[RMDB]
RNA sequence: GGGAACGACUCGAGUAGAGUCGAAAAAGUGUUCGAGGGUUAAUGCUUUGACGCUGUCGCCCAGGUUAUGGUUGCGCACCUUUCCGGUGAAGGUGACUACCGCACCGUCUUCGUCACGCUCCGCCAGCGUGAGUCGCCAAUUCGUUGGCGACUCACGAAAAGAAACAACAACAACAAC
Reactivity to DMS in 0.01 (KOAc 150mM, MgCl2 10mM, bicine 150mM(pH8.5), 24C), signal-to-noise 2, nucleotides 027 to 126: a030g000u000g000u010u000c040g000a060g020g010g020u010u010a090a090u030g010c040u000u010u010g030a090c100g000c050u000g000u000c050g010c000c020c010a090g000g030u010u010a090u010g010g020u000u000g000c090g020c020a010c010c010u000u000u010c050c150g030g020u030g000a040a030g020g010u000g010a060c060u000a080c300c000g010c120a030c020c030g000u000c050u010u010c040g000u000c040a040c040g010c020u010c040c040g010c100c120a090g020
Reactivity to 2A3 in 0.01 (KOAc 150mM, MgCl2 10mM, bicine 150mM(pH8.5), 24C), signal-to-noise 2, nucleotides 027 to 126: a000g050u020g020u060u060c040g000a060g050g020g120u160u230a220a060u260g100c000u030u030u110g040a030c030g000c070u040g090u160c000g010c030c010c000a030g100g020u070u070a090u160g030g000u070u050g030c160g000c120a040c000c070u020u150u000c100c140g240g020u170g060a050a010g010g010u000g020a020c010u060a010c050c020g020c010a010c020c030g040u010c060u080u070c000g070u030c000a010c030g050c040u040c040c000g080c000c000a040g010
This 177-nucleotide RNA was probed chemically with DMS and 2A3. It was measured as part of the RMDB library OK2TRN. For 2A3 the reverse transcriptase was SuperScript II with manganese. The 2A3 profile rests on 1,053 reads. For DMS the reverse transcriptase was MarathonRT. The DMS profile rests on 2,121 reads. The RNA was probed in 150 mM KOAc, 10 mM MgCl2 and 150 mM bicine (pH 8.5) at 24 C.